[RMDB]
RNA sequence: GGGAACGACUCGAGUAGAGUCGAAAAAGAUCGAUUACGAUCGAUCAAUGAUGCCCCUCACCCACCUCUGAAGAUCCCAGGUGGGCGAGGGAACGGAGCUCGGGAUCACGAGCAGUACGCUGCUCGAAAAAGAACUAGACCUUCGGGUCUAGUUCAACUAAGCAUACUGGUUCGCCAGUAUGCUUAGAAAAGAAACAACAACAACAAC
Reactivity to 2A3 in 0.01 (KOAc 150mM, MgCl2 10mM, bicine 150mM(pH8.5), 24C), signal-to-noise 4, nucleotides 027 to 156: a000g010a000u000c000g010a000u040u110a100c220g060a020u000c000g010a000u010c000a020a100u230g100a080u150g080c020c000c020c000u000c000a020c000c000c000a010c000c000u060c050u100g080a060a010g010a050u020c000c000c000a000g000g000u000g000g000g000c010g010a010g000g000g010a030a030c090g070g060a070g060c090u120c120g020g020g000a010u050c010a010c030g000a000g010c000a000g010u020a020c250g010c120u000g000c000u010c000g030a020a000a000a010a000g000a000a000c000u000a000g000a000c010c000u040u090c290g050g000g000u000c000u000a000g000u000u000c000a000a000
Reactivity to DMS in 0.01 (KOAc 150mM, MgCl2 10mM, bicine 150mM(pH8.5), 24C), signal-to-noise 1, nucleotides 027 to 156: a140g000a000u010c000g010a060u000u000a140c270g040a140u000c010g030a000u000c000a240a100u020g010a180u000g000c040c000c000c000u000c010a010c000c000c010a030c020c010u020c030u000g010a160a180g000a120u010c040c000c010a100g000g000u010g000g000g000c020g000a040g000g010g010a000a030c010g000g020a110g000c070u010c050g010g010g010a140u010c070a170c010g010a000g020c000a050g020u010a080c300g040c050u000g040c010u000c010g020a030a070a060a130a190g000a010a000c000u000a040g010a020c000c000u000u010c300g080g060g000u000c010u000a000g020u010u000c000a010a190